[RMDB]
RNA sequence: GGGAACGACUCGAGUAGAGUCGAAAAGAUAUGGACGUCUGAAUUUCAUCGAUCUAGUGUUUCGGAAACGAAACCUAGGGAGAAACAGACGUCCUAAGUCAAAGGCAAUCCGUUCGCGGAUUGCCAACCUUAGACGGAUGUUCGCAUCCGUCUAAGGAAAAGAAACAACAACAACAAC
Reactivity to DMS in 0.01 (KOAc 150mM, MgCl2 10mM, bicine 150mM(pH8.5), 24C), signal-to-noise 2, nucleotides 027 to 126: g000a030u010a050u010g000g000a010c000g000u000c000u000g000a170a170u000u000u000c000a300u000c210g000a010u020c000u010a000g000u010g000u000u000u000c000g000g020a000a000a010c010g020a000a010a010c000c000u000a000g000g000g020a000g010a000a020a030c000a010g000a010c000g000u000c010c000u000a000a080g000u000c000a120a140a130g010g020c000a000a000u000c000c010g020u000u010c240g020c020g050g000a010u000u000g020c000c020a000a000
Reactivity to 2A3 in 0.01 (KOAc 150mM, MgCl2 10mM, bicine 150mM(pH8.5), 24C), signal-to-noise 3, nucleotides 027 to 126: g000a000u000a000u050g000g000a000c000g010u030c010u010g300a300a300u110u050u010c090a190u300c020g000a000u000c010u010a010g010u020g000u300u010u020c000g000g000a000a030a000c000g000a000a000a010c000c000u020a010g000g020g000a060g000a000a000a000c000a010g000a020c000g010u000c000c000u000a000a000g000u000c000a090a060a060g010g000c000a000a000u000c030c020g020u070u090c300g000c040g070g010a010u000u000g000c000c010a010a010